[RMDB]
An RNA of 177 nucleotides, treated with DMS and 2A3 and read out base by base.
The RNA was probed in 150 mM KOAc, 10 mM MgCl2 and 150 mM bicine (pH 8.5) at 24 C.

RNA sequence: GGGAACGACUCGAGUAGAGUCGAAAAAUGUCAUUCGCAUGCACGAGUACCUUGGGCCUGACAAGGCCACUGUAUUUGCCCAGGAAAUGGGCACAGCCAUUAGGGACGUCCCAGUGUUCGGGACUAAACUCCCGGUAGGAUUCGUCCUACCGGGAGUAAAAGAAACAACAACAACAAC
Reactivity to DMS in 0.01 (KOAc 150mM, MgCl2 10mM, bicine 150mM(pH8.5), 24C), signal-to-noise 2, nucleotides 027 to 126: a120u010g020u010c060a150u000u000c080g010c050a090u000g010c060a040c060g020a070g000u010a090c050c040u010u020g020g020g010c000c010u000g000a040c300a070a020g000g010c010c030a030c040u000g020u010a090u000u000u010g010c020c020c010a060g000g020a040a080a060u000g030g020g010c010a030c050a050g000c070c080a110u010u000a070g020g000g000a120c130g000u010c000c010c000a080g010u000g000u000u000c110g010g000g010a090c020u010a030a100
Reactivity to 2A3 in 0.01 (KOAc 150mM, MgCl2 10mM, bicine 150mM(pH8.5), 24C), signal-to-noise 1, nucleotides 027 to 126: a000u070g080u040c030a030u080u070c040g000c060a040u130g050c050a050c050g030a010g020u070a060c010c000u030u080g090g010g000c040c030u130g060a090c050a050a040g020g010c050c000a010c010u010g010u000a120u100u160u070g030c000c000c000a030g230g050a110a200a040u010g020g000g000c010a000c030a000g000c030c050a070u070u130a060g010g010g080a040c070g000u000c030c020c020a000g040u040g050u150u090c040g030g000g030a010c030u050a160a120